[RMDB]
RNA sequence: GGGAACGACUCGAGUAGAGUCGAAAAGGAUGCGAGCGACAUCAUCGUGUACGACAACGGCGUGGUGUAUGCCUACGACGACGCGAAGGAAGUGCGGAAGGUGAAGGCACCCGAAGCAUGGGGUUCCGGUGAAGCAUACGCUCUCGGUGCGCUGGCCGCGUAUACUCUCUUUCGAGAGAGUAUACGCAAAAGAAACAACAACAACAAC
Reactivity to DMS in 0.01 (KOAc 150mM, MgCl2 10mM, bicine 150mM(pH8.5), 24C), signal-to-noise 2, nucleotides 027 to 156: g010g010a070u000g030c040g020a120g040c010g000a100c000a100u000c010a130u030c060g000u010g020u000a050c030g010a130c020a090a120c040g020g010c040g040u000g000g060u020g020u000a020u030g030c040c020u040a070c080g000a080c030g010a090c000g000c020g030a070a170g010g010a130a130g060u000g020c080g000g000a130a020g030g030u000g030a130a140g000g030c000a040c010c010c010g030a300a260g020c060a080u000g020g010g030g040u000u000c030c020g000g050u020g020a090a090g010c000a140u000a110c050g020c000u000c060u010c020g030g030u010g020c030g000c010u010g020g040c000c060
Reactivity to 2A3 in 0.01 (KOAc 150mM, MgCl2 10mM, bicine 150mM(pH8.5), 24C), signal-to-noise 4, nucleotides 027 to 156: g110g010a040u110g010c030g010a020g030c030g110a130c020a050u060c000a020u050c060g010u020g030u140a120c060g080a050c100a100a030c060g030g000c050g030u060g000g030u030g040u040a040u050g000c010c010u060a070c060g070a010c020g010a020c040g010c040g030a010a040g060g020a070a020g050u030g040c020g000g020a050a000g000g020u070g080a100a150g140g070c030a010c010c010c000g040a020a010g010c030a020u080g020g000g020g060u060u010c020c010g010g000u090g050a060a000g000c020a030u020a040c050g000c010u000c030u040c080g040g010u030g020c030g000c050u020g090g000c030c050